[RMDB]
RNA sequence: GGGAACGACUCGAGUAGAGUCGAAAAAAAAGAUAUGGACGUCACUACCCACCUAGUGAGCGAACGUUUGACGUACCUCGGAAACGAGGUACCGAGUUCCCACUAGAGGUGACGUCCUAAGUCAAAACCCAUAUGUUAGCUUCGGCUAACAUAUGGGAAAAGAAACAACAACAACAAC
Reactivity to DMS in 0.01 (KOAc 150mM, MgCl2 10mM, bicine 150mM(pH8.5), 24C), signal-to-noise 2, nucleotides 027 to 126: a070a060a060a090g010a120u030a100u000g000g000a030c000g010u000c000a020c010u000a110c010c020c000a300c160c010u010a020g010u000g010a040g060c230g000a000a020c000g010u000u020u010g010a270c300g000u000a000c000c000u000c000g020g000a050a130a200c030g010a020g000g010u000a010c010c000g040a040g010u020u000c010c000c000a000c000u000a000g000a050g030g000u000g000a010c010g000u020c000c000u000a010a050g020u000c070a100a080a150a070
Reactivity to 2A3 in 0.01 (KOAc 150mM, MgCl2 10mM, bicine 150mM(pH8.5), 24C), signal-to-noise 2, nucleotides 027 to 126: a000a000a000a050g210a100u260a170u170g010g000a010c000g000u030c000a010c010u190a290c050c030c010a000c010c010u000a000g000u010g070a150g130c300g040a010a000c010g060u150u260u300g090a040c050g000u000a010c000c000u000c000g030g040a030a070a070c000g010a010g030g040u000a010c010c010g040a000g000u030u000c030c000c000a010c010u040a010g020a000g010g010u000g000a010c010g000u000c000c000u000a000a010g070u010c030a000a040a080a130
This 177-nucleotide RNA was probed chemically with DMS and 2A3.
In probing experiments dimethyl sulfate is read out at A N1 and C N3, which are open when not base-paired.
Source: RMDB library TTRDES, as collected in RNAgym.